[RMDB]
RNA sequence: GGGAACGACUCGAGUAGAGUCGAAAACUCACCAGAUUGUGCCAUUUUGUUUCAUGAAUUAUACAGGCCCUGGUUAACUGGGACCCAGUGGAUCAAACAGUGCUUGCCAAUGAGCAGGUGGAUGAACAUGGCUGUUCAUGGCGUUCUGGAGCAAAGGCGCUUCACAAUAAUUCGUUAUUGUGAAGCGAAAAGAAACAACAACAACAAC
Reactivity to DMS in 0.01 (KOAc 150mM, MgCl2 10mM, bicine 150mM(pH8.5), 24C), signal-to-noise 1, nucleotides 027 to 156: c010u010c030a220c040c000a090g030a050u000u000g000u010g000c040c060a080u000u030u000u000g020u000u000u010c020a030u010g010a110a170u020u020a130u010a030c080a060g020g020c010c000c030u000g030g020u000u010a020a120c050u000g020g010g010a050c010c020c030a160g010u000g050g050a070u010c040a100a040a110c090a070g000u000g030c030u020u010g000c010c020a130a100u010g010a050g050c020a050g000g030u000g010g000a160u000g010a040a070c030a080u000g040g000c100u010g000u010u000c010a080u010g030g050c080g000u000u000c020u000g000g000a110g010c070a040a070a160g010g000
Reactivity to 2A3 in 0.01 (KOAc 150mM, MgCl2 10mM, bicine 150mM(pH8.5), 24C), signal-to-noise 4, nucleotides 027 to 156: c030u040c030a110c030c030a090g110a260u070u140g020u060g030c020c040a050u070u060u040u010g050u040u010u010c060a070u220g050a070a060u130u150a110u070a230c070a070g010g000c000c020c010u010g000g000u020u050a030a010c010u020g040g040g090a070c020c020c010a020g010u060g090g040a090u120c100a070a100a060c010a030g030u010g050c010u050u060g000c000c010a130a300u050g010a010g010c000a010g050g070u030g030g070a190u210g040a090a050c020a040u080g140g000c000u000g010u010u010c010a000u020g000g030c010g000u020u000c000u010g010g000a020g000c010a020a020a050g050g010